[RMDB]
RNA sequence: GGGAACGACUCGAGUAGAGUCGAAAAUCGUCUUCCUCGGUCAACCUCCGGAGUUCCUCUUCCUCCUCCUUGCUGAGUGACUUUCCUCCCGCGCUCAGCUGCUUCUUCUUGUUCUCGAGGGCUUUCCAGAGUCUACAGUUCGCUGUAGACAAAAGAAACAACAACAACAAC
Reactivity to 2A3 in 0.01 (KOAc 150mM, MgCl2 10mM, bicine 150mM(pH8.5), 24C), signal-to-noise 9, nucleotides 027 to 129: u110c010g030u010c020u130u060c010c000u010c020g010g020u040c030a080a050c020c020u040c010c020g020g010a050g020u040u030c010c000u010c000u030u030c010c000u010c000c000u020c000c010u030u060g000c010u010g010a020g010u050g050a140c020u080u130u080c000c010u040c000c000c000g020c000g000c010u010c010a010g010c020u030g020c000u030u050c000u040u010c010u040u080g080u130u010c010u010c010g020a060g020g040g010c010u020u020u000c000c010a020g020a020
Reactivity to DMS in 0.01 (KOAc 150mM, MgCl2 10mM, bicine 150mM(pH8.5), 24C), signal-to-noise 9, nucleotides 027 to 129: u020c060g000u010c040u030u010c070c010u010c030g010g000u020c090a080a130c070c020u010c020c030g020g030a060g040u030u020c020c010u010c030u010u010c020c010u000c010c010u010c010c070u030u020g010c000u030g000a050g040u010g000a060c060u010u010u010c040c020u020c000c030c060g020c030g000c010u020c000a010g000c010u020g020c090u000u000c040u020u000c050u010u000g020u030u010c000u000c040g010a090g000g000g000c130u010u010u020c010c020a070g000a300